Chemical mapping of a 177-nucleotide RNA with DMS. It was measured as part of the RMDB library VIROID. Conditions: 150 mM KOAc, 10 mM MgCl2 and 150 mM bicine (pH 8.5), 24 C. For DMS the reverse transcriptase was MarathonRT.

RNA sequence: GGGAACGACUCGAGUAGAGUCGAAAAUCGGAAGGCACUCCGGGCCGAAGGGUUGAGUAGCACACAGAGGGAGAAAGCCACACGGAGAUGGGUAGAGAAAUCACCUCCAGAGGACCCCUUCAGCGAACAAUGUUCACUACUUCGGUAGUGAACAUUGAAAAGAAACAACAACAACAAC
Reactivity to DMS in 0.01 (KOAc 150mM, MgCl2 10mM, bicine 150mM(pH8.5), 24C), signal-to-noise 2, nucleotides 027 to 126: u010c030g000g010a090a070g000g010c090a090c070u000c060c060g030g000g010c000c040g000a060a090g000g000g010u000u010g010a070g000u010a070g040c100a060c080a080c170a120g010a160g010g030g000a110g000a050a090a110g010c050c020a040c150a280c110g020g010a010g010a040u000g010g000g000u030a080g010a180g010a060a120a080u020c010a030c050c010u000c010c020a120g000a150g030g000a100c140c010c000c020u000u000c000a030g000c060g000a100a110